[RMDB]
RNA sequence: GGGAACGACUCGAGUAGAGUCGAAAAUAUUUUAUUCACCCCCCACAUUAAUCCCAGUUAAAGCUUUAUAACUAUAAGUAAGCCGUGCCGAAACGUUAAUCGGUCGCUAGUUGCGUAACAACUGUUAACACCAUAUUCCUUUCGAGGAAUAUGGUGUAAAAGAAACAACAACAACAAC
Reactivity to 2A3 in 0.01 (KOAc 150mM, MgCl2 10mM, bicine 150mM(pH8.5), 24C), signal-to-noise 7, nucleotides 027 to 126: u100a070u030u210u080u080a230u170u150c040a120c000c010c000c010c020c000a030c020a060u110u170a120a070u040c000c000c000a000g000u000u020a040a010a000g020c000u020u060u030a250u110a220a020c010u010a020u010a300a010g030u010a000a000g000c000c000g000u000g000c000c000g020a070a090a080c000g040u040u050a010a010u010c000g010g000u000c000g000c000u000a000g010u000u010g030c000g010u020a000a000c000a000a000c000u000g060u060u090a020
Reactivity to DMS in 0.01 (KOAc 150mM, MgCl2 10mM, bicine 150mM(pH8.5), 24C), signal-to-noise 2, nucleotides 027 to 126: u040a020u030u020u020u040a110u040u020c070a210c000c000c010c000c020c080a090c170a090u060u030a070a100u000c010c010c030a020g000u000u000a100a040a090g000c000u000u000u000a000u030a020a000c000u000a070u020a020a010g000u000a020a010g060c010c030g000u000g000c000c000g000a010a000a040c010g050u000u040a020a020u000c000g000g030u000c010g000c000u000a000g000u000u010g010c000g000u010a000a010c010a000a020c000u000g010u030u050a090

About this RNA:
This 177-nucleotide RNA was probed chemically with 2A3 and DMS. 2A3 adducts were read by reverse transcription with SuperScript II with manganese. For DMS the reverse transcriptase was MarathonRT. Conditions: 150 mM KOAc, 10 mM MgCl2 and 150 mM bicine (pH 8.5), 24 C. The 2A3 profile rests on 4,881 reads.